Structure probing data (2A3 and DMS) for a 177-nucleotide construct. The RNA was probed in 150 mM KOAc, 10 mM MgCl2 and 150 mM bicine (pH 8.5) at 24 C. DMS adducts were read by reverse transcription with MarathonRT. The DMS profile rests on 17,577 reads. Reactivities are rounded to 0.1 and cut off at 0 and 3. Reactivities are given for positions 27 through 126.
RNA sequence: GGGAACGACUCGAGUAGAGUCGAAAAGAUAUGGACGUACGUUCGCCAUGCCGAGUCGGAAACGACGAUGAGGCAUGGAACUACGAAUGUACGUCCUAAGUCAAACCAGCUACUUCGGUAGCUGGAACAUAUUGUUCAACUUCGGUUGAACAAUAUGAAAAGAAACAACAACAACAAC
Reactivity to 2A3 in 0.01 (KOAc 150mM, MgCl2 10mM, bicine 150mM(pH8.5), 24C), signal-to-noise 6, nucleotides 027 to 126: g040a020u070a040u160g000g000a000c000g000u000a000c000g000u000u000c020g000c020c000a000u000g000c010c010g020a020g010u010c020g050g090a200a300a180c200g230a050c010g020a140u090g050a020g000g010c010a000u010g000g010a000a010c020u130a020c020g010a010a000u000g000u010a000c010g000u010c000c000u000a000a000g000u010c010a010a020a090c010c000a000g000c000u000a000c010u030u100c210g140g000u000a000g010c000u000g000g000a010a000
Reactivity to DMS in 0.01 (KOAc 150mM, MgCl2 10mM, bicine 150mM(pH8.5), 24C), signal-to-noise 9, nucleotides 027 to 126: g010a040u000a300u000g000g000a010c010g010u000a000c010g020u000u010c000g000c010c000a010u000g000c000c000g000a300g000u010c000g010g010a100a110a150c180g010a070c000g010a060u000g010a300g000g010c010a000u000g000g010a030a020c120u010a300c020g000a010a000u000g010u000a000c010g000u000c000c000u000a000a030g010u000c030a110a140a190c000c000a010g010c000u000a000c000u000u010c140g020g010u000a000g010c000u000g010g000a040a140